[RMDB]
RNA sequence: GGGAACGACUCGAGUAGAGUCGAAAAUGUCGGCGAAGCGGAUCGGCGUCCGGCGCAUCUCGCCGAACUCGGAGAUCAGCUUGCCGUCCUCGCUGUAGACCUUGAGGGGGAUCUGCAGCUGGACGUUCUACAUUACUAUGUUCGCAUAGUAAUGUAGAAAAGAAACAACAACAACAAC
Reactivity to DMS in 0.01 (KOAc 150mM, MgCl2 10mM, bicine 150mM(pH8.5), 24C), signal-to-noise 4, nucleotides 027 to 126: u000g020u020c030g000g000c010g010a020a010g020c010g010g010a020u000c000g010g020c230g000u000c030c000g010g030c020g030c300a150u010c210u000c000g030c010c000g020a000a010c020u010c050g000g010a280g000a020u000c010a040g010c010u000u000g000c030c010g010u000c000c010u000c230g000c000u000g010u000a010g010a020c020c000u000u000g020a140g010g000g010g010g000a050u000c000u000g010c000a000g000c000u000g000g000a070c170g000u010u000
Reactivity to 2A3 in 0.01 (KOAc 150mM, MgCl2 10mM, bicine 150mM(pH8.5), 24C), signal-to-noise 9, nucleotides 027 to 126: u170g030u050c030g000g010c130g080a030a010g010c020g010g020a020u020c020g080g050c040g070u010c020c000g020g000c010g010c040a130u100c130u090c070g000c000c010g000a030a020c010u010c040g140g090a140g000a060u010c010a010g000c010u020u030g010c010c010g000u000c000c010u020c070g000c000u010g000u010a010g010a020c010c000u020u080g100a290g070g110g000g000g040a160u000c000u000g010c000a010g000c000u010g020g020a010c010g020u020u000